The data come from the RNA Mapping Database (RMDB), library OK3TST.
Chemical mapping of a 207-nucleotide RNA with 2A3 and DMS.
The RNA was probed in 150 mM KOAc, 10 mM MgCl2 and 150 mM bicine (pH 8.5) at 24 C.
2A3 is a SHAPE reagent: it acylates the 2'-hydroxyl of flexible nucleotides of all four kinds.
The DMS profile rests on 3,140 reads.
RNA sequence: GGGAACGACUCGAGUAGAGUCGAAAAUAGCCAUUGUACUCACUUCUUAUUACCUCUUUUUUCACAUCCUGGGAAUGGUCUGCCUCGUCGGUUGGAUCAUGACCACUCACUGGGGUCAGGUCGUUGAGCAAAUCGGACAAGGUCGUCCUUGGUGGGGUCCCUAGAUAUUAUUCGUAAUAUCUAGGGAAAAAGAAACAACAACAACAAC
Reactivity to 2A3 in 0.01 (KOAc 150mM, MgCl2 10mM, bicine 150mM(pH8.5), 24C), signal-to-noise 4, nucleotides 027 to 156: u100a010g050c010c010a050u050u070g060u130a080c010u040c030a080c050u090u070c040u090u140a150u130u150a190c010c030u070c070u110u140u070u030u120u160c070a120c040a140u110c040c040u050g010g000g040a050a030u030g010g010u020c000u010g010c020c000u100c070g180u070c070g040g020u090u230g070g020a010u020c010a060u040g020a000c010c000a030c000u070c010a070c050u070g040g000g030g000u010c000a040g000g010u000c020g060u070u080g020a020g020c050a050a040a130u120c080g060g010a020c020a060a040g100g020u040c020g020u000c030c000u010u030g030g000u010g010g030g030g040
Reactivity to DMS in 0.01 (KOAc 150mM, MgCl2 10mM, bicine 150mM(pH8.5), 24C), signal-to-noise 1, nucleotides 027 to 156: u010a080g000c040c010a110u010u000g030u000a080c030u010c040a090c070u000u010c060u010u000a090u000u010a080c040c050u000c000u000u000u000u000u000u000c040a160c080a090u000c030c040u000g040g000g010a100a040u010g020g010u010c000u010g000c030c010u000c150g000u000c090g020g040u000u000g080g030a070u010c050a100u000g000a160c010c010a050c050u000c070a160c080u000g010g030g040g030u020c050a090g010g020u000c030g030u010u000g020a120g020c050a060a060a130u000c050g010g010a050c030a070a110g040g020u010c060g010u000c070c030u000u010g000g000u000g000g000g050g010